[RMDB]
RNA sequence: GGGAACGACUCGAGUAGAGUCGAAAAUCGUGAGAUGUGGUGCCUCACGCGCUCGAGGCGUCCGUGGUCAGAGAGACCACUGACGCAAAAACUCGAGCGCAAAUAAAAUGCAUUACAUUAAGAAUAAACCUAUGGUAUGCUUCGGCAUACCAUAGGUAAAAGAAACAACAACAACAAC
Reactivity to DMS in 0.01 (KOAc 150mM, MgCl2 10mM, bicine 150mM(pH8.5), 24C), signal-to-noise 2, nucleotides 027 to 126: u060c020g000u020g000a130g000a070u000g040u000g000g000u010g010c000c140u000c090a100c120g040c020g010c000u000c010g000a030g000g000c000g030u000c000c050g030u000g000g000u020c000a110g030a250g060a190g000a010c000c000a020c020u000g000a020c000g000c030a040a030a030a130a270c000u000c000g000a010g000c000g020c000a000a010a050u020a150a050a080a030u030g000c000a000u000u000a030c010a070u020u000a030a050g000a100a090u020a060a050
Reactivity to 2A3 in 0.01 (KOAc 150mM, MgCl2 10mM, bicine 150mM(pH8.5), 24C), signal-to-noise 3, nucleotides 027 to 126: u190c050g000u030g040a070g010a080u200g010u010g020g000u010g000c020c000u040c000a060c050g010c000g000c000u000c000g000a010g000g000c000g010u000c000c000g000u010g000g000u010c020a040g120a050g010a010g000a300c000c000a000c000u000g000a000c000g000c000a120a080a000a020a020c000u000c000g000a000g000c000g000c000a010a000a000u070a010a040a010a030u070g010c000a000u000u000a000c000a000u120u210a110a100g100a120a060u230a170a080

This 177-nucleotide RNA was probed chemically with DMS and 2A3. DMS adducts were read by reverse transcription with MarathonRT. Conditions: 150 mM KOAc, 10 mM MgCl2 and 150 mM bicine (pH 8.5), 24 C. Source: RMDB library OK1LIB, as collected in RNAgym. For 2A3 the reverse transcriptase was SuperScript II with manganese. High DMS reactivity at an A or C suggests that its Watson-Crick edge is free.